[RMDB]
RNA sequence: GGGAACGACUCGAGUAGAGUCGAAAAUGGUGUGCCCUACUGGCCGAGUGGCGUCAACACAGCGUAUGGUACCUUCGGUGUGAUCAACGAGACUAUGCUUAGCGACUACUGGUCGUGGCUACUGGAGACUCUAACCGACAUUCGUGUCGGUUAGAGUAAAAGAAACAACAACAACAAC
Reactivity to DMS in 0.01 (KOAc 150mM, MgCl2 10mM, bicine 150mM(pH8.5), 24C), signal-to-noise 3, nucleotides 027 to 126: u010g000g030u000g010u010g010c020c040c100u010a050c040u010g010g010c020c030g000a080g010u000g030g020c070g020u000c070a060a120c120a080c100a080g000c050g020u010a060u000g010g010u010a040c130c140u010u000c090g000g030u020g030u020g000a070u010c110a020a080c060g000a120g000a130c050u010a050u010g000c040u020u000a090g030c040g000a080c020u000a070c110u020g030g030u000c010g050u000g000g010c010u000a070c050u010g000g000a200g000
Reactivity to 2A3 in 0.01 (KOAc 150mM, MgCl2 10mM, bicine 150mM(pH8.5), 24C), signal-to-noise 2, nucleotides 027 to 126: u130g030g020u070g040u080g020c000c000c000u020a060c060u060g040g000c020c030g060a040g020u050g000g020c060g070u100c040a090a090c060a030c010a050g070c010g060u110a070u150g050g020u170a150c000c010u030u080c040g040g050u020g000u060g090a150u070c040a070a030c020g060a000g020a120c050u040a020u140g000c000u090u110a000g030c000g080a160c000u120a090c030u100g040g000u000c000g020u040g020g020c020u050a040c020u020g040g000a080g040